[RMDB]
RNA sequence: GGGAACGACUCGAGUAGAGUCGAAAAACCUGAUGAUUCGUCAUCAGGUCACAUGCCGCCCGAACGGCUUCCUGACCGGGCGGAUUCACUUUUAAUGGAGCACUGCUGCAUCAUUCGUGAUGCAGAAAUCCGCAAAAGUAUUCGUACUUUUGCGGAUAAAAGAAACAACAACAACAAC
Reactivity to 2A3 in 0.01 (KOAc 150mM, MgCl2 10mM, bicine 150mM(pH8.5), 24C), signal-to-noise 4, nucleotides 027 to 126: a000c000c000u000g000a000u010g000a010u020u090c190g040u010c090a000u000c000a010g000g000u010c000a060c000a050u140g010c010c000g000c000c000c010g020a040a020c070g070g000c020u200u100c010c000u010g050a030c010c020g000g010g000c020g020g000a020u130u060c030a050c090u120u190u110u270a120a130u180g020g000a000g000c020a010c130u170g000c000u010g000c000a000u000c000a000u040u060c070g110u030g000a010u010g000c000a000g000a020a010
Reactivity to DMS in 0.01 (KOAc 150mM, MgCl2 10mM, bicine 150mM(pH8.5), 24C), signal-to-noise 4, nucleotides 027 to 126: a010c000c000u000g010a020u000g000a010u010u010c200g020u000c010a010u000c010a010g010g010u000c070a060c140a090u000g020c000c000g000c000c000c020g020a060a220c080g000g000c020u000u000c010c020u000g010a170c180c020g020g020g010c010g000g000a020u000u000c120a100c190u020u010u000u000a040a110u010g010g000a040g010c020a160c240u010g000c000u000g010c000a000u000c000a040u000u000c200g020u000g000a000u000g010c000a000g000a010a080

Structure probing data (2A3 and DMS) for a 177-nucleotide construct. The RNA was probed in 150 mM KOAc, 10 mM MgCl2 and 150 mM bicine (pH 8.5) at 24 C. 2A3 adducts were read by reverse transcription with SuperScript II with manganese. For DMS, 3,292 sequencing reads were counted. DMS (dimethyl sulfate) methylates the pairing face of unpaired adenines and cytosines. Reactivities are given for positions 27 through 126.